Structure probing data (DMS and 2A3) for a 177-nucleotide construct. For DMS the reverse transcriptase was MarathonRT. 2A3 adducts were read by reverse transcription with SuperScript II with manganese. DMS (dimethyl sulfate) methylates the pairing face of unpaired adenines and cytosines.
RNA sequence: GGGAACGACUCGAGUAGAGUCGAAAAACGCUAGCUACGGCUAGCGAAUAUAGGCAUGUGCCACCACACCUGGCUUAAAUGUGUCAUUUAAAAAUUCAGGCCAGGCACAGUGGCUCAUGCCUGUAAAUCAGAUAAGGUCUUUCGAGACCUUAUCUGAAAAAGAAACAACAACAACAAC
Reactivity to DMS in 0.01 (KOAc 150mM, MgCl2 10mM, bicine 150mM(pH8.5), 24C), signal-to-noise 5, nucleotides 027 to 126: a120c020g020c000u000a010g000c000u000a050c200g050g000c000u000a000g000c000g000a040a030u020a030u000a000g010g000c000a000u010g000u000g000c000c000a000c000c020a210c300a300c010c000u000g010g000c000u000u000a040a020a010u010g010u020g000u030c190a110u010u020u020a020a040a090a090a020u000u020c060a040g000g010c010c000a000g000g000c060a050c260a170g000u000g000g020c000u000c000a000u000g010c000c010u000g000u010a010a080a150
Reactivity to 2A3 in 0.01 (KOAc 150mM, MgCl2 10mM, bicine 150mM(pH8.5), 24C), signal-to-noise 6, nucleotides 027 to 126: a000c010g000c000u000a000g010c000u020a030c200g140g000c010u000a000g000c010g000a000a000u070a000u010a000g000g010c000a000u000g000u020g000c000c000a000c000c020a040c000a000c010c000u010g000g020c000u090u060a090a080a070u210g110u060g080u090c050a080u040u160u290a140a150a070a040a020u090u090c040a010g020g000c000c000a000g000g000c000a010c010a000g000u000g000g000c000u000c000a000u000g000c000c000u000g000u000a000a000a010